[RMDB]
RNA sequence: GGGAACGACUCGAGUAGAGUCGAAAAGUACGACAACUUAUUACGCAUCAUCGUACGAUAGAUGCUAAGAUUAGUGGCGAAAGCCACAAGCACGGGCAUUCAUAAGUCAGAUCCGAGAGGAUUUGACGUCCUAGCCUGUGCAAGACUAGGUCAGACAAAUUAAUACGACCUUCGGGUCGUAUUAAUUAAAAGAAACAACAACAACAAC
Reactivity to DMS in 0.01 (KOAc 150mM, MgCl2 10mM, bicine 150mM(pH8.5), 24C), signal-to-noise 3, nucleotides 027 to 156: g050u000a040c050g020a120c040a120a140c050u000u000a150u000u010a160c180g030c080a050u000c060a110u000c030g010u010a100c120g000a090u000a050g020a080u000g020c000u010a040a060g000a100u000u000a090g050u010g010g030c000g010a180a100a300g040c000c000a010c030a060a060g030c010a030c010g000g010g050c010a150u010u000c070a060u000a100a180g010u000c000a000g000a000u000c010c000g010a300g000a300g000g000a000u000u000u020g000a010c000g020u010c030c050u000a070g040c000c000u000g000u000g010c030a040a040g010a120c050u000a120g000g010u000c050a180g000a150c100a110
Reactivity to 2A3 in 0.01 (KOAc 150mM, MgCl2 10mM, bicine 150mM(pH8.5), 24C), signal-to-noise 3, nucleotides 027 to 156: g070u090a010c090g030a030c070a160a050c080u080u140a060u100u100a110c070g000c010a000u000c000a000u000c010g180u150a130c160g030a010u050a100g000a000u000g000c010u030a020a020g040a100u070u200a040g000u000g000g000c010g050a100a000a010g010c000c020a000c030a020a010g000c000a000c000g020g010g000c020a030u100u020c040a060u300a200a030g010u000c000a000g000a000u000c010c010g040a040g010a050g090g000a000u000u000u000g000a000c000g000u010c000c000u040a030g000c000c000u000g010u000g000c000a000a010g010a000c070u080a020g000g140u030c010a020g010a100c040a040